[RMDB]
About this RNA:
Chemical mapping of a 207-nucleotide RNA with DMS and 2A3. The 2A3 profile rests on 928 reads. It was measured as part of the RMDB library M2RFPK.
RNA sequence: GGGAACGACUCGAGUAGAGUCGAAAACUCUUGUUAGGUGAAAGUUGAUGGUCGCCGUGUCAGUCCAUGCCUUUGAAAACAGUUCUAUGUAGUAGGGAGUCGAGAACCUAUGAGAGUUAGAACUUGCUAUGCCUUGGACUCUUCGGAGUCCAAGGAAGAAAGGUUUUACGUUCGCGUAAAACCUUUCAAAAGAAACAACAACAACAAC
Reactivity to DMS in 0.01 (KOAc 150mM, MgCl2 10mM, bicine 150mM(pH8.5), 24C), signal-to-noise 2, nucleotides 027 to 156: c030u000c020u000u010g030u000u000a070g000g010u010g010a050a070a120g020u000u000g020a140u000g040g020u000c020g050c000c020g030u000g020u010c010a090g000u000c090c040a060u000g020c050c000u000u020u000g000a090a080a050a050c060a050g000u000u000c030u000a040u000g010u010a300g020u000a050g030g000g010a120g020u000c130g000a210g000a100a110c010c010u000a040u000g000a220g000a140g000u010u000a040g000a030a060c020u000u010g030c000u010a090u000g010c000c000u000u000g010g000a030c010u000c000u000u000c290g030g020a030g010u000c000c010a010a000g000g010a000a010
Reactivity to 2A3 in 0.01 (KOAc 150mM, MgCl2 10mM, bicine 150mM(pH8.5), 24C), signal-to-noise 2, nucleotides 027 to 156: c010u000c010u080u040g130u090u100a070g040g000u040g060a120a060a050g030u080u050g010a080u030g050g010u060c040g000c050c030g030u010g030u030c030a020g030u000c030c000a040u080g050c020c040u130u100u140g110a070a050a020a020c040a020g000u000u050c010u050a050u070g030u050a030g020u000a010g010g020g040a030g060u000c050g000a020g040a140a040c010c000u020a020u030g070a080g000a020g100u010u080a030g010a020a020c000u010u050g020c040u050a110u170g010c030c000u000u000g000g000a000c000u000c000u020u040c190g150g000a000g000u000c010c000a000a000g010g010a000a000
For DMS the reverse transcriptase was MarathonRT. Conditions: 150 mM KOAc, 10 mM MgCl2 and 150 mM bicine (pH 8.5), 24 C.